An RNA of 177 nucleotides, treated with DMS and 2A3 and read out base by base.
Reactivities are given for positions 27 through 126.
For DMS the reverse transcriptase was MarathonRT.
It was measured as part of the RMDB libraries RFM100 and RFMREP.
Conditions: 150 mM KOAc, 10 mM MgCl2 and 150 mM bicine (pH 8.5), 24 C.
RNA sequence: GGGAACGACUCGAGUAGAGUCGAAAACAGCAUAUGAUGAUAAAAUACAAACUGAAACGUUGUCGUGGUCUAUUUUUGAACACUUCGAUGUUACCCUGGGAUGGUCGCAUUUGCGAGGCAUUUGCCUCCAAAUACCCCUGUUCGCAGGGGUAUUUGGAAAAGAAACAACAACAACAAC
Reactivity to DMS in 0.01 (KOAc 150mM, MgCl2 10mM, bicine 150mM(pH8.5), 24C), signal-to-noise 5, nucleotides 027 to 126: c060a100g000c110a030u010a050u020g000a080u020g020a110u010a070a070a070a080u030a100c150a060a110a170c090u020g000a090a050a040c050g020u000u000g010u000c060g010u000g010g000u000c010u000a060u010u000u020u010u010g010a010a030c040a020c020u010u000c010g030a010u020g000u020u000a100c100c020c000u000g000g010g020a070u000g000g000u000c090g020c040a120u010u000u020g000c090g010a030g010g020c010a300u010u030u030g010c000c010u010
Reactivity to 2A3 in 0.01 (KOAc 150mM, MgCl2 10mM, bicine 150mM(pH8.5), 24C), signal-to-noise 9, nucleotides 027 to 126: c020a010g070c050a040u090a050u220g070a060u060g060a030u200a150a150a080a020u220a090c090a040a160a040c060u110g050a070a020a020c050g010u010u020g030u030c010g010u020g020g010u020c010u070a160u120u190u050u110u180g040a020a000c010a000c000u000u020c010g030a010u030g020u050u060a090c010c000c000u070g030g000g040a040u060g050g000u040c010g000c040a060u040u040u140g040c040g030a030g040g000c010a020u050u040u270g030c000c000u000